The record gives the reactivity of an RNA of 177 nucleotides to 2A3. It was measured as part of the RMDB library RFM100.
RNA sequence: GGGAACGACUCGAGUAGAGUCGAAAAGAGCCGUGAACCUGAAUGGGAAUGCGCUUCAGGGGCGCGUGGAAACGCCCAGGAGGCAGCGGCGACGGCGCAGCCUGGGACUGCCAGGAGCGCCGGGCGGUCCCUGGCGCGUCUUCGGACGCGCCAGGGAAAAAGAAACAACAACAACAAC
Reactivity to 2A3 in 0.01 (KOAc 150mM, MgCl2 10mM, bicine 150mM(pH8.5), 24C), signal-to-noise 1, nucleotides 027 to 126: g000a020g000c010c000g000u000g050a140a190c000c000u140g030a170a090u030g040g000g010a020a120u070g040c110g030c040u000u080c140a080g000g000g010g000c010g000c060g080u140g020g150a070a120a000c120g020c010c030c000a000g020g000a040g000g010c020a000g000c030g000g000c000g000a000c010g030g000c000g000c070a070g100c000c000u160g000g140g140a300c120u160g040c110c000a050g000g010a000g000c060g040c010c000g000g030g000c010g040g050

About this RNA
For 2A3, 352 sequencing reads were counted.